[RMDB]
RNA sequence: GGGAACGACUCGAGUAGAGUCGAAAAGAUAUGGAGGAUGAGUGAACUACCUCAUUACUCGGAAACGAGUACCUCGGGAGGCACUCCGCUCCUCCUAAGUCAAAAUCAUUGCCUUCGGGCAAUGAAAUCUACAGACGUACUUCGGUACGUCUGUAGAAAAAGAAACAACAACAACAAC
Reactivity to 2A3 in 0.01 (KOAc 150mM, MgCl2 10mM, bicine 150mM(pH8.5), 24C), signal-to-noise 2, nucleotides 027 to 126: g020a010u020a030u180g000g020a030g000g010a030u280g000a080g020u030g080a300a300c050u270a300c070c020u110c030a020u080u080a020c000u000c010g000g000a130a100a000c000g000a000g000u020a050c030c080u090c030g010g040g000a010g010g030c020a020c020u000c000c000g070c010u000c020c000u000c020c010u010a130a040g030u020c030a020a010a020a300u030c000a000u020u000g010c000c000u030u060c300g100g000g090c000a000a000u010g000a010a010a000
Reactivity to DMS in 0.01 (KOAc 150mM, MgCl2 10mM, bicine 150mM(pH8.5), 24C), signal-to-noise 2, nucleotides 027 to 126: g000a080u010a300u000g000g000a040g010g010a020u000g000a090g010u000g000a130a090c110u000a170c050c020u000c260a170u010u000a000c000u010c000g000g020a130a070a180c000g000a010g000u000a010c300c240u000c300g000g000g000a070g000g000c050a010c020u000c000c090g000c110u010c000c000u010c000c020u000a020a110g010u000c050a100a060a220a200u000c010a000u010u000g010c000c000u000u000c270g030g000g020c020a000a000u000g000a000a090a140